[RMDB]
RNA sequence: GGGAACGACUCGAGUAGAGUCGAAAACAACAGCGUGCUCGUGCUCAGAUGUGAUCUGAGCAUGACCGCCAGACUACGCAGUCUAUUGUCGGUCAUAGACAAUACGCUGUUCUAUAUAUACUGGGACGAUUUAGUGUUAUUUCGAUAGUACUAAAUCAAAAGAAACAACAACAACAAC
Reactivity to 2A3 in 0.01 (KOAc 150mM, MgCl2 10mM, bicine 150mM(pH8.5), 24C), signal-to-noise 9, nucleotides 027 to 126: c040a010a000c010a020g010c010g070u110g010c070u010c020g020u020g000c000u000c010a020g020a050u130g220u300g300a190u050c000u000g000a000g000c000a000u000g000a000c000c010g000c010c000a040g020a040c050u210a060c150g080c110a010g000u000c010u020a050u030u070g030u050c020g030g030u100c070a100u100a120g010a010c000a020a020u070a030c030g000c000u000g000u030u000c010u010a040u010a030u010a010u020a170c110u150g060g030g090a050c110
Reactivity to DMS in 0.01 (KOAc 150mM, MgCl2 10mM, bicine 150mM(pH8.5), 24C), signal-to-noise 9, nucleotides 027 to 126: c180a040a060c080a040g000c010g010u010g010c120u010c020g030u010g000c000u010c000a010g010a030u010g020u040g010a090u000c000u000g000a010g010c000a010u000g000a010c060c040g010c060c100a040g010a060c050u020a130c300g010c180a040g010u000c080u010a050u020u010g010u020c000g010g020u010c180a060u040a160g000a030c050a040a040u010a020c120g000c000u000g000u000u000c100u030a110u040a080u020a090u030a080c060u000g000g000g020a150c180
The record gives the reactivity of an RNA of 177 nucleotides to 2A3 and DMS. For DMS, 32,848 sequencing reads were counted. DMS adducts were read by reverse transcription with MarathonRT. It was measured as part of the RMDB library OK1LIB.